[RMDB]
The record gives the reactivity of an RNA of 177 nucleotides to DMS. The reactions ran in a buffer of 150 mM KOAc, 10 mM MgCl2 and 150 mM bicine (pH 8.5), at 24 C. For DMS the reverse transcriptase was MarathonRT. It was measured as part of the RMDB library OK2TST.
RNA sequence: GGGAACGACUCGAGUAGAGUCGAAAAGCGCUCGACAAGCCUGGCAUAUUCACCCGGAUUAUGAUCGCCGCGCGCAAGCUUGCGCUCCGAUGGCUUGAAAGGCACCACCGGCGUCGCGCGAUCAAGAUGCAUUAGCUCACUUCGGUGAGCUAAUGCAAAAAGAAACAACAACAACAAC
Reactivity to DMS in 0.01 (KOAc 150mM, MgCl2 10mM, bicine 150mM(pH8.5), 24C), signal-to-noise 1, nucleotides 027 to 126: g010c000g010c070u000c070g000a110c010a090a170g010c040c140u010g020g000c040a020u000a150u020u000c080a060c000c010c020g010g000a070u000u010a170u000g000a010u010c010g000c060c020g010c110g010c040g040c020a110a070g010c060u000u000g020c070g010c040u020c000c000g010a150u000g000g000c040u010u000g000a110a090a080g010g010c130a050c090c070a120c030c030g000g060c030g010u010c070g040c070g000c000g000a020u010c000a040a110g010a160